[RMDB]
Conditions: 150 mM KOAc, 10 mM MgCl2 and 150 mM bicine (pH 8.5), 24 C. Structure probing data (DMS and 2A3) for a 177-nucleotide construct. For 2A3, 1,928 sequencing reads were counted. For DMS the reverse transcriptase was MarathonRT. Source: RMDB library OK1LIB, as collected in RNAgym.
RNA sequence: GGGAACGACUCGAGUAGAGUCGAAAAGGACGGAACCAAUGUACUUCUUACAUAUAUUGAUUGAUGGCUCAUGUCUCGUUAAAAUGUAUGAAGCCAAACUGUGCCCCGACCACCUUGGGCACAUGUCGAUCACGACUCCAUUCGUGGAGUCGUGAUCAAAAGAAACAACAACAACAAC
Reactivity to DMS in 0.01 (KOAc 150mM, MgCl2 10mM, bicine 150mM(pH8.5), 24C), signal-to-noise 1, nucleotides 027 to 126: g000g000a070c000g000g000a000a140c120c050a000a070u000g000u050a140c050u000u000c100u000u030a010c000a070u000a030u000a300u000u000g000a060u050u010g000a030u060g010g000c020u000c210a130u030g000u000c000u000c110g020u000u020a000a030a030a050u000g030u000a010u000g100a000a060g000c300c010a000a120a300c050u000g000u010g000c100c000c000c300g000a170c050c000a000c020c080u000u110g000g000g020c000a000c040a000u000g000u020c140
Reactivity to 2A3 in 0.01 (KOAc 150mM, MgCl2 10mM, bicine 150mM(pH8.5), 24C), signal-to-noise 3, nucleotides 027 to 126: g040g010a030c090g080g010a010a030c020c040a050a070u150g020u040a090c030u010u060c000u000u050a000c030a050u060a030u040a120u100u080g070a070u170u130g030a070u250g000g040c020u060c080a040u240g050u000c000u010c030g020u010u070a130a070a000a000u060g000u020a030u000g030a030a010g010c030c050a060a070a020c010u060g020u000g000c030c010c010c040g100a050c010c050a030c010c050u040u060g000g000g060c000a010c010a000u120g010u010c100